[RMDB]
RNA sequence: GGGAACGACUCGAGUAGAGUCGAAAAAGGAUGCCAGCUCACGGCACGACUCACCGCGUCGUUGAGCGUCAGGCUACCGGGAGCGGCAGCGCUCAGCGGCAGAUCGGCAACCGCGCCGUCCAGCGAGCUAUCGGGCAAAAUUCGUUUUGCCCGAUAGAAAAGAAACAACAACAACAAC
Reactivity to DMS in 0.01 (KOAc 150mM, MgCl2 10mM, bicine 150mM(pH8.5), 24C), signal-to-noise 5, nucleotides 027 to 126: a070g020g010a120u010g000c020c020a170g010c020u000c130a080c030g000g000c020a030c010g000a050c070u010c200a300c050c010g000c100g010u000c000g010u040u010g020a010g010c010g010u010c060a300g010g010c000u000a080c000c010g000g010g000a040g010c010g000g020c130a150g000c030g000c020u010c010a030g000c010g000g000c020a050g000a050u040c070g000g010c060a120a180c130c030g000c050g000c000c010g000u000c070c130a070g000c070g010a140g020
Reactivity to 2A3 in 0.01 (KOAc 150mM, MgCl2 10mM, bicine 150mM(pH8.5), 24C), signal-to-noise 9, nucleotides 027 to 126: a010g150g020a080u110g020c020c010a010g010c020u020c020a010c020g010g000c010a010c020g060a050c010u080c110a040c020c010g010c030g010u010c000g000u010u040g000a010g010c010g030u080c030a040g150g000c000u020a050c010c030g010g030g020a030g020c020g050g000c030a030g030c020g000c000u010c010a000g010c000g020g000c020a030g030a150u150c020g010g000c010a030a030c020c010g010c010g000c000c000g010u030c040c020a020g020c010g040a010g010